[RMDB]
RNA sequence: GGGAACGACUCGAGUAGAGUCGAAAAGAGGGGAAGGAUCUGUGUUUAGUAUAUGUUGGGGAUAUUGAUGGUCUUAAAAAAGAUAUUACUUCACAUUUCGCCAAGAAAGGACACAUAAUGUGUUCAGUACAUUCAAGGUGUUCGCACCUUGAAUGUAAAAAGAAACAACAACAACAAC
Reactivity to DMS in 0.01 (KOAc 150mM, MgCl2 10mM, bicine 150mM(pH8.5), 24C), signal-to-noise 4, nucleotides 027 to 126: g030a050g010g010g010g000a070a060g000g000a060u000c060u030g010u010g000u010u000u000a090g010u020a060u030a050u030g020u000u000g000g000g000g010a060u020a040u030u020g010a080u010g000g010u000c020u010u010a010a050a080a080a070a020g010a060u010a050u010u040a130c060u000u010c040a040c160a090u010u010u010c050g000c070c040a060a100g000a050a090a110g020g000a000c020a010c010a080u030a100a090u040g010u000g000u010u000c000a130g020
Reactivity to 2A3 in 0.01 (KOAc 150mM, MgCl2 10mM, bicine 150mM(pH8.5), 24C), signal-to-noise 6, nucleotides 027 to 126: g040a010g000g050g000g020a080a010g050g000a050u030c050u040g060u010g070u060u070u140a100g020u040a070u040a050u260g150u060u050g000g020g010g030a010u040a100u090u110g080a130u090g040g020u010c010u050u090a100a110a030a030a000a010g050a030u090a050u070u130a080c080u070u100c030a020c010a130u040u080u070c070g020c050c000a020a040g060a060a120a020g020g010a000c010a000c000a030u300a250a090u300g010u000g000u000u010c020a000g010